[RMDB]
Notes
Structure probing data (2A3) for a 207-nucleotide construct. The reactions ran in a buffer of 150 mM KOAc, 10 mM MgCl2 and 150 mM bicine (pH 8.5), at 24 C. It was measured as part of the RMDB library OK3TST.
RNA sequence: GGGAACGACUCGAGUAGAGUCGAAAACUGAGAAGGAUCCUGAAGAGCUGAGAAGGAAGCUCUGAUCAGCUGAAGCUAGCUGACUCUUCUCAGGACUUCAGGAAGGAUCCUGAGAGAUCGAGACUUCCUUCGAAGAGCUGAUCUCAGUCGAGAUCGAGGUUGCUUUUCAUUUCGAUGAAAAGCAACCAAAAGAAACAACAACAACAAC
Reactivity to 2A3 in 0.01 (KOAc 150mM, MgCl2 10mM, bicine 150mM(pH8.5), 24C), signal-to-noise 1, nucleotides 027 to 156: c050u060g000a040g000a060a050g010g020a010u050c030c010u070g040a060a030g000a010g110c030u000g010a010g000a020a000g020g040a040a030g040c030u010c060u150g030a290u030c000a000g000c000u080g030a160a040g140c170u180a000g020c000u070g030a080c030u020c000u170u000c000u000c000a000g000g000a000c010u110u110c030a030g140g010a010a020g060g000a030u000c010c010u040g000a020g000a010g000a050u070c050g010a010g080a270c020u030u000c000c000u000u010c000g000a030a030g030a000g020c040u030g000a000u000c000u000c000a060g300u170c080g040a010g000a000u040c000g000a010